RNA sequence: GGGAACGACUCGAGUAGAGUCGAAAAGUUAUGGAAAACGUGUUAGCUACCACUACAACAACAAUGCUGGACGGUGAUGGUUCGACUUACUCGAAACCAUCACGUAGUGGUAGUCGUUCCCAUUCAAUCACAGAAUCCGAUUCGUCGGAUUCUGUGAAAAAGAAACAACAACAACAAC
Reactivity to 2A3 in 0.01 (KOAc 150mM, MgCl2 10mM, bicine 150mM(pH8.5), 24C), signal-to-noise 2, nucleotides 027 to 126: g030u080u020a030u290g140g030a090a080a010a040c030g050u100g030u190u160a020g000c020u010a000c000c010a020c020u020a000c020a240a010c010a050a010c020a070a270u300g050c040u090g050g150a050c140g020g010u000g000a010u020g000g000u010u000c010g010a020c070u090u210a090c010u050c010g020a080a050a060c010c000a000u000c030a000c010g000u000a010g000u000g010g000u000a010g000u000c000g000u000u010c000c000c000a010u060u110c010a000a070
Reactivity to DMS in 0.01 (KOAc 150mM, MgCl2 10mM, bicine 150mM(pH8.5), 24C), signal-to-noise 2, nucleotides 027 to 126: g010u010u010a050u020g000g040a080a090a050a070c050g000u010g020u000u000a140g000c000u000a000c010c010a010c010u010a010c020a090a150c070a060a090c210a040a150u020g010c030u000g010g020a100c300g000g000u000g010a000u010g000g010u000u000c000g000a000c300u000u020a030c300u000c020g000a040a020a030c000c000a000u000c010a010c000g050u000a000g060u000g000g030u000a010g000u000c030g020u010u000c010c000c000a280u000u000c140a090a180
Overview: An RNA of 177 nucleotides, treated with 2A3 and DMS and read out base by base. For DMS the reverse transcriptase was MarathonRT. Conditions: 150 mM KOAc, 10 mM MgCl2 and 150 mM bicine (pH 8.5), 24 C. The DMS profile rests on 984 reads. For 2A3, 1,577 sequencing reads were counted. The data come from the RNA Mapping Database (RMDB), library M2PK90.